[RMDB]
RNA sequence: GGGAACGACUCGAGUAGAGUCGAAAAAUUAUCUUGCCUGGCAACUGCCUCAGGGGAGGCCAUCACUGUUGCCUCAGGCAGCUCAGGGUUUAUGUCCUCAGACAAAGAUGGAAAGGCUGAUGGGGCAGCAUGGGUCAGGGAGGGAAUGUUGCCACUACCCGGUAUUACCAUUCGUGGUAAUACCGGGAAAAGAAACAACAACAACAAC
Reactivity to 2A3 in 0.01 (KOAc 150mM, MgCl2 10mM, bicine 150mM(pH8.5), 24C), signal-to-noise 2, nucleotides 027 to 156: a000u090u170a070u070c060u020u040g050c010c000u000g000g000c010a000a010c060u080g010c000c010u000c060a140g070g000g160g000a040g000g000c000c020a080u140c010a060c100u030g030u020u010g020c020c000u010c030a030g130g020c000a000g000c000u000c060a030g040g040g050u130u060u060a190u230g010u080c000c030u090c060a010g010a140c040a190a150a000g040a130u220g000g050a080a080a040g030g000c040u000g000a040u090g030g000g000g000c020a030g000c020a060u070g080g000g000u060c070a030g080g050g060a100g040g000g020a060a130u090g010u030u000g080c040c020a080c030u090a060
This 207-nucleotide RNA was probed chemically with 2A3.
2A3 adducts were read by reverse transcription with SuperScript II with manganese.